[RMDB]
Overview
Source: RMDB library OK1LIB, as collected in RNAgym. Structure probing data (2A3 and DMS) for a 177-nucleotide construct. For 2A3 the reverse transcriptase was SuperScript II with manganese. For DMS the reverse transcriptase was MarathonRT. Conditions: 150 mM KOAc, 10 mM MgCl2 and 150 mM bicine (pH 8.5), 24 C.

RNA sequence: GGGAACGACUCGAGUAGAGUCGAAAACUUUUCUCCUGCGCUACUGUGACGAAAACCUUUAAUUGUUUUAAAGAAUAAUUCAUCUGUUUUCUUCAUGAAUGGAUGCAAUAAAUCAAUUUUAUUUAUCGAGGGAUAAUAUGUUCGCAUAUUAUCCCUCAAAAGAAACAACAACAACAAC
Reactivity to 2A3 in 0.01 (KOAc 150mM, MgCl2 10mM, bicine 150mM(pH8.5), 24C), signal-to-noise 3, nucleotides 027 to 126: c000u140u060u050u000c040u040c030c010u070g010c000g020c020u080a060c010u050g010u030g040a030c070g030a000a030a040a080c020c030u120u090u040a130a110u070u030g040u050u050u040u100a080a140a050g070a050a000u100a050a030u050u030c020a000u000c020u030g060u020u020u020u010c040u020u030c020a060u080g160a130a020u090g050g030a030u040g060c070a030a040u060a130a080a040u070c010a010a000u000u120u100u070a180u040u230u000a160u070c070
Reactivity to DMS in 0.01 (KOAc 150mM, MgCl2 10mM, bicine 150mM(pH8.5), 24C), signal-to-noise 1, nucleotides 027 to 126: c030u000u010u010u000c020u000c020c030u030g010c100g000c000u010a060c080u020g000u010g040a060c040g020a040a100a070a030c010c030u000u020u010a010a040u000u000g000u010u010u000u070a000a020a250g010a110a030u000a000a060u000u000c040a000u000c020u020g010u000u010u010u010c060u000u020c090a070u010g000a060a020u030g000g000a010u020g000c100a040a160u000a050a050a040u010c110a010a030u000u040u010u010a020u030u020u000a070u010c060